[RMDB]
RNA sequence: GGGAACGACUCGAGUAGAGUCGAAAAGUUCGCCGCUCCGUUCGUGAGACGGAUGGCCGGGGUGAGCAGCAGUGAGAACAGCACCUGGCCGGCCACGACUGAGCGCGCGGUGCGCAGCGGGCGCGCCAACGGAUGCUUACUUCGGUAAGCAUCCGUUAAAAGAAACAACAACAACAAC
Reactivity to 2A3 in 0.01 (KOAc 150mM, MgCl2 10mM, bicine 150mM(pH8.5), 24C), signal-to-noise 2, nucleotides 027 to 126: g020u040u050c030g010c050c010g000c030u030c000c010g100u160u110c030g010u040g070a280g030a140c010g100g100a240u140g000g000c020c000g000g010g060g060u230g130a150g010c080a020g000c000a070g110u120g180a180g060a110a040c010a040g050c010a000c050c000u010g080g000c010c020g020g000c020c000a030c000g040a010c030u050g020a010g030c010g010c010g030c020g020g050u020g020c000g000c020a050g100c090g070g010g000c010g030c000g000c000c000
Reactivity to DMS in 0.01 (KOAc 150mM, MgCl2 10mM, bicine 150mM(pH8.5), 24C), signal-to-noise 1, nucleotides 027 to 126: g000u000u000c020g000c030c020g010c020u010c000c040g030u020u000c010g000u000g000a140g010a100c090g020g000a160u010g000g030c020c000g020g000g030g010u010g000a140g030c090a120g000c080a050g020u000g000a170g020a100a040c070a120g020c010a130c010c000u000g010g020c040c000g000g000c000c000a010c020g000a080c040u000g010a110g020c010g010c160g020c060g010g000u000g000c020g000c060a200g030c080g020g000g000c000g000c040g020c010c060
Chemical mapping of a 177-nucleotide RNA with 2A3 and DMS. Reactivities are given for positions 27 through 126. The RNA was probed in 150 mM KOAc, 10 mM MgCl2 and 150 mM bicine (pH 8.5) at 24 C.